RNA sequence: GGGAACGACUCGAGUAGAGUCGAAAAACUAGUCAUACGUGACUAGAAGGGACCAGGGGUGCUUGUUCACAGGCUGAGAAAGUCCCUUUGAACCUGAACAGGGUAAUGCCUGCGCAGGGAGUGUCAAAUCGCUGGAAAUAUUCGUAUUUCCAGCGAUAAAAGAAACAACAACAACAAC
Reactivity to 2A3 in 0.01 (KOAc 150mM, MgCl2 10mM, bicine 150mM(pH8.5), 24C), signal-to-noise 5, nucleotides 027 to 126: a000c000u000a000g010u000c000a010u010a130c300g090u030g000a000c000u020a000g010a020a070g110g020g000a010c010c020a050g030g010g000g020u040g000c040u050u010g060u150u070c160a150c010a270g040g000c020u020g000a000g030a140a300a030g100u200c000c000c000u110u110u040g010a000a000c000c000u000g020a120a040c000a010g000g020g020u030a010a000u090g050c000c000u000g000c030g000c070a000g000g030g010a010g000u220g010u000c030a070a040
Reactivity to DMS in 0.01 (KOAc 150mM, MgCl2 10mM, bicine 150mM(pH8.5), 24C), signal-to-noise 4, nucleotides 027 to 126: a170c010u000a000g010u000c000a040u000a110c160g020u010g000a000c000u000a000g010a090a040g000g000g000a040c010c020a120g010g010g000g030u020g000c040u010u010g010u020u030c140a050c020a060g000g000c040u010g000a120g010a070a140a130g000u010c000c000c000u000u010u020g000a060a110c000c000u000g000a030a050c020a000g000g010g000u000a120a080u030g010c000c000u000g010c300g000c000a020g000g010g010a100g020u010g000u010c110a060a140
Structure probing data (2A3 and DMS) for a 177-nucleotide construct. 2A3 adducts were read by reverse transcription with SuperScript II with manganese. Reactivities are given for positions 27 through 126. The RNA was probed in 150 mM KOAc, 10 mM MgCl2 and 150 mM bicine (pH 8.5) at 24 C. It was measured as part of the RMDB libraries RFM100 and RFMREP.